Structure probing data (2A3 and DMS) for a 177-nucleotide construct. For 2A3, 2,753 sequencing reads were counted. DMS adducts were read by reverse transcription with MarathonRT. Conditions: 150 mM KOAc, 10 mM MgCl2 and 150 mM bicine (pH 8.5), 24 C. For 2A3 the reverse transcriptase was SuperScript II with manganese. The DMS profile rests on 4,211 reads.

RNA sequence: GGGAACGACUCGAGUAGAGUCGAAAAACCUAUGGAUUCGUCCAUAGGUGCUGGCGCGCGGCCUUUGUCCUGUGGCGUGUGCGUGGUGGGCGAUAUACGCGCAAUAGUGACAAUUCGUUGUCACUAAGAUUGGCUUUAGUUUCGACUAAAGCCAAUCAAAAGAAACAACAACAACAAC
Reactivity to 2A3 in 0.01 (KOAc 150mM, MgCl2 10mM, bicine 150mM(pH8.5), 24C), signal-to-noise 2, nucleotides 027 to 126: a000c000c000u010a000u010g010g000a030u010u110c190g060u020c070c010a000u000a020g000g010u010g010c060u070g040g030c000g000c000g000c000g100g060c020c000u080u050u110g020u050c000c020u050g040u120g100g000c040g010u120g050u080g050c030g030u090g010g230u090g020g040g010c030g010a000u020a000u010a150c000g020c010g000c020a020a060u050a050g010u010g010a000c010a010a020u020u050c250g050u070u030g000u000c000a010c000u000a020a070
Reactivity to DMS in 0.01 (KOAc 150mM, MgCl2 10mM, bicine 150mM(pH8.5), 24C), signal-to-noise 3, nucleotides 027 to 126: a020c000c000u000a000u000g010g010a060u000u010c190g010u000c000c000a010u000a000g000g010u000g010c070u000g020g010c070g010c050g010c030g000g000c040c060u000u000u000g010u000c030c040u000g010u010g010g010c020g020u010g020u000g020c050g030u000g010g010u000g000g000g010c020g000a080u010a100u000a060c070g010c030g010c070a110a130u010a010g010u000g010a020c000a010a060u000u020c210g010u000u000g000u000c000a000c000u010a040a060